[RMDB]
RNA sequence: GGGAACGACUCGAGUAGAGUCGAAAAGGGGCUGACAGGAAUCGACAGUAGAGUGUAUCAUGUCAGUAAGCAUGCCGGGGAAUGGUGGUUUACCCCGUUAUCAAAUGAUUACCGACCCAUAAUUGGCUUAGCUCGUUGGGCUUCGGCCCAACGAGAAUCGUUAAAUUGGCUUCGGCCAAUUUAACGAAAAAGAAACAACAACAACAAC
Reactivity to 2A3 in 0.01 (KOAc 150mM, MgCl2 10mM, bicine 150mM(pH8.5), 24C), signal-to-noise 1, nucleotides 027 to 156: g100g000g010g000c020u040g000a000c020a020g000g010a060a070u110c070g030a010c020a020g130u210a140g090a020g080u030g010u050a150u110c090a070u110g030u020c000a000g000u020a040a010g000c010a010u050g030c080c030g020g000g000g000a010a040u100g000g040u060g010g020u000u000u080a110c010c000c030c010g040u030u010a060u150c040a080a050a050u140g030a120u010u070a040c020c020g040a050c020c020c000a080u170a170a120u110u120g040g000c040u070u090a040g060c000u000c000g000u000u000g030g000g000c010u050u050c110g040g000c020c010c000a000a000c000g010a000g000a000a010

Chemical mapping of a 207-nucleotide RNA with 2A3.
The RNA was probed in 150 mM KOAc, 10 mM MgCl2 and 150 mM bicine (pH 8.5) at 24 C.